[RMDB]
RNA sequence: GGGAACGACUCGAGUAGAGUCGAAAACGCUGCGGCACCAUGCCCACGCGUCAUGAAACCAUGAGGUCCGACCAGGCGCAUUAACUUGUCCUCGUAGGCGUCCGUCCUACGUCCGACAAGACGACCAGAACGCCUUAGCGUUCGCGCUAAGGCGUUCAAAAGAAACAACAACAACAAC
Reactivity to 2A3 in 0.01 (KOAc 150mM, MgCl2 10mM, bicine 150mM(pH8.5), 24C), signal-to-noise 4, nucleotides 027 to 126: c010g000c010u010g000c040g050g000c030a070c130c040a280u300g010c000c000c010a010c050g010c010g000u020c000a080u150g070a100a100a030c050c030a020u110g040a000g020g000u020c020c000g010a030c030c020a020g040g000c010g020c040a040u090u060a040a080c000u010u010g000u010c000c000u000c000g000u010a010g000g030c020g090u160c160c110g050u120c000c020u020a000c000g020u010c000c000g000a000c000a010a000g010a060c020g060a040c000c040a010
Reactivity to DMS in 0.01 (KOAc 150mM, MgCl2 10mM, bicine 150mM(pH8.5), 24C), signal-to-noise 2, nucleotides 027 to 126: c070g000c000u010g090c100g000g000c010a300c300c120a060u060g000c040c100c020a290c240g000c010g070u000c050a130u000g000a190a090a290c050c030a070u030g000a140g000g050u000c000c020g000a060c060c110a120g000g060c010g050c180a130u000u040a000a010c000u020u000g000u000c000c060u000c000g040u000a000g020g020c110g000u030c240c120g000u040c000c020u000a070c000g000u000c210c220g000a060c010a030a030g000a220c070g000a270c100c150a170